[RMDB]
RNA sequence: GGGAACGACUCGAGUAGAGUCGAAAAGUGAGGCUUAUCCCGGGGAACUCGGCGAAUCGUCCCCACAUAGCAGUUCCCAGGACCCCCUUCUAAAAUGACCGAGAGGGGGUGCUAGGAACACGGGGGCUACGGAGUAACUUCGGUUACUCCAAAAGAAACAACAACAACAAC
Reactivity to DMS in 0.01 (KOAc 150mM, MgCl2 10mM, bicine 150mM(pH8.5), 24C), signal-to-noise 8, nucleotides 027 to 129: g030u040g000a040g020g020c050u000u050a100u030c010c000c000g040g000g000g020a080a080c050u000c000g000g020c090g000a040a030u040c050g000u020c010c010c000c010a120c130a080u060a110g010c000a090g000u010u010c000c000c000a060g000g030a030c000c000c000c000c000u000u040c040u030a060a060a100a130u040g050a130c170c160g000a020g010a000g030g000g010g000g010u020g000c020u000a030g010g020a010a000c020a050c100g010g000g020g010g020c040u020a060c070
Reactivity to 2A3 in 0.01 (KOAc 150mM, MgCl2 10mM, bicine 150mM(pH8.5), 24C), signal-to-noise 9, nucleotides 027 to 129: g050u050g030a020g040g010c020u060u070a080u140c010c000c020g000g000g000g000a060a030c020u010c050g040g000c060g050a040a080u080c060g010u010c010c010c060c010a050c020a050u170a010g090c070a020g000u000u000c000c000c010a000g010g040a000c000c000c000c010c000u050u050c010u060a100a110a100a100u200g070a080c060c080g040a040g010a020g120g000g000g010g000u000g010c000u000a000g000g000a010a000c020a010c040g010g000g000g010g000c000u030a030c080